[RMDB]
RNA sequence: GGGAACGACUCGAGUAGAGUCGAAAAAAAAGCAGCUGGAAAUGGACAACCACAAUAUGCAUAAAUCUAACUCCUACCAUCAGCGACACACUGCUUGACACAUAUUGCGAGAAGCACCUCGCAUUUGAUCUUGUGCUCAAUUCGUUGAGCACAAGAUAAAAGAAACAACAACAACAAC
Reactivity to 2A3 in 0.01 (KOAc 150mM, MgCl2 10mM, bicine 150mM(pH8.5), 24C), signal-to-noise 7, nucleotides 027 to 126: a000a000a010a010g030c020a010g000c030u070g020g020a010a090a070u070g030g030a040c040a090a090c040c010a060c040a080a110u090a040u160g060c040a060u100a080a090a040u060c040u060a030a050c030u030c030c010u020a090c020c010a040u070c020a010g030c000g090a010c020a000c010a000c060u030g010c000u040u050g060a020c020a000c010a110u090a060u150u110g000c010g000a000g010a130a020g050c020a040c010c010u000c000g000c010a010u030u000u110g030
Reactivity to DMS in 0.01 (KOAc 150mM, MgCl2 10mM, bicine 150mM(pH8.5), 24C), signal-to-noise 5, nucleotides 027 to 126: a080a020a040a070g000c030a040g010c130u000g010g000a020a060a070u000g000g000a080c110a080a060c100c040a060c080a090a060u030a070u010g020c050a090u020a030a070a060u020c040u010a080a110c060u010c020c010u010a060c060c010a060u000c070a070g000c080g010a070c060a070c060a060c030u010g000c040u000u010g010a100c190a080c090a050u030a060u030u000g000c000g000a030g000a130a120g020c160a120c120c000u010c010g000c000a050u010u000u010g000